An RNA of 207 nucleotides, treated with 2A3 and read out base by base.

RNA sequence: GGGAACGACUCGAGUAGAGUCGAAAAGCUCGUAAGCAAGUAGCUGCUCUAGCUUAAUUGCAAAAACACCUCUUAUAGGUUCGAGCGUCUGUGGUUUGACUCCGUUAAUAAUUGCAGACUUAACCCCAACGGAUGCUCUAGCAAUUUUUCUCUGGUUAGAGGAUAUCUUGUUCGCAAGAUAUCCUCUAAAAGAAACAACAACAACAAC
Reactivity to 2A3 in 0.01 (KOAc 150mM, MgCl2 10mM, bicine 150mM(pH8.5), 24C), signal-to-noise 1, nucleotides 027 to 156: g000c000u000c010g020u100a000a060g020c010a010a060g090u140a110g120c030u020g070c030u130c160u180a000g020c000u050u000a050a010u100u000g000c000a000a030a030a050a030c050a040c020c050u110c100u140u300a190u190a300g000g000u030u020c030g010a000g000c000g000u000c000u010g050u080g000g050u010u010u040g010a010c010u000c020c000g030u010u040a040a030u080a140a030u240u090g000c010a000g010a020c000u090u100a020a040c020c000c010c040a010a000c030g010g010a010u070g020c020u020c000u050a030g000c030a130a140u010u000u010u090u160c070u000c050u120g120g000u010u050